[RMDB]
RNA sequence: GGGAACGACUCGAGUAGAGUCGAAAACAAAACUGUUUAAAAAACGAUCAAAAGACACUGGACGCUACGCCGUCCUGAACAAUACUUAAGCUGCUGACGCGUCAUCAUUCCCCAAAUGACUCGGCAGCGUGCUAUGUCCAUUCGUGGACAUAGCACGAAAAGAAACAACAACAACAAC
Reactivity to 2A3 in 0.01 (KOAc 150mM, MgCl2 10mM, bicine 150mM(pH8.5), 24C), signal-to-noise 6, nucleotides 027 to 126: c030a000a050a020a070c110u170g090u100u130u210a090a160a050a030a020a030c070g030a060u130c120a030a100a060a030g130a050c050a020c070u010g010g010a010c000g010c060u190a060c050g140c230c010g010u000c000c000u010g000a030a040c030a060a090u130a100c070u130u090a140a020g030c010u030g000c000u020g040a030c040g020c040g150u010c000a010u010c010a080u100u090c020c000c000c010a070a060a020u020g010a010c000u000c010g010g010c000a000g010
Reactivity to DMS in 0.01 (KOAc 150mM, MgCl2 10mM, bicine 150mM(pH8.5), 24C), signal-to-noise 4, nucleotides 027 to 126: c080a100a070a040a070c140u070g000u010u050u040a010a080a040a130a080a030c060g020a110u070c160a090a070a060a110g000a120c130a120c050u010g000g000a040c020g040c020u060a170c260g060c200c020g010u000c000c000u030g000a080a090c170a040a050u020a050c120u020u010a040a080g000c030u000g000c000u010g000a060c150g000c160g000u000c020a010u000c040a120u020u000c090c000c000c050a060a070a010u000g000a020c010u000c020g010g000c000a010g000